Annotation
This 177-nucleotide RNA was probed chemically with DMS and 2A3. The data come from the RNA Mapping Database (RMDB), library RFM100.
[RMDB]
RNA sequence: GGGAACGACUCGAGUAGAGUCGAAAAGAAAGAAACGAUGGUGGCGUUUUUGGGGACAGGUGUCCGUGUCGCGCGUCGCCUGGGCCGGCGGCGUGGUCGGUGACGCGACCUCCCGGCCCCGGGGAAAACUCGUAAAGCGAUUCGUCGCUUUACGAGUAAAAGAAACAACAACAACAAC
Reactivity to DMS in 0.01 (KOAc 150mM, MgCl2 10mM, bicine 150mM(pH8.5), 24C), signal-to-noise 2, nucleotides 027 to 126: g000a100a100a040g020a060a050a090c070g000a100u010g010g020u020g030g010c020g010u000u030u000u000u000g000g010g000g000a080c040a180g000g030u010g020u000c010c010g000u020g010u010c040g010c060g000c040g010u000c000g000c000c000u010g000g010g000c060c060g000g000c300g000g010c110g000u030g040g020u010c040g020g000u010g020a130c170g010c030g000a040c010c010u000c020c030c010g000g000c000c020c010c060g000g000g020g040a120a100a050
Reactivity to 2A3 in 0.01 (KOAc 150mM, MgCl2 10mM, bicine 150mM(pH8.5), 24C), signal-to-noise 2, nucleotides 027 to 126: g100a010a070a000g100a010a080a010c050g020a030u060g000g060u040g040g010c010g020u020u050u040u060u190g130g020g000g030a030c050a090g110g050u130g040u120c070c040g050u060g050u060c060g010c000g000c000g050u010c030g030c000c000u030g000g020g010c000c000g000g010c060g000g010c060g050u020g000g010u060c030g030g030u040g020a000c030g030c000g100a060c000c030u030c010c000c000g000g000c000c000c000c000g000g000g000g000a070a040a000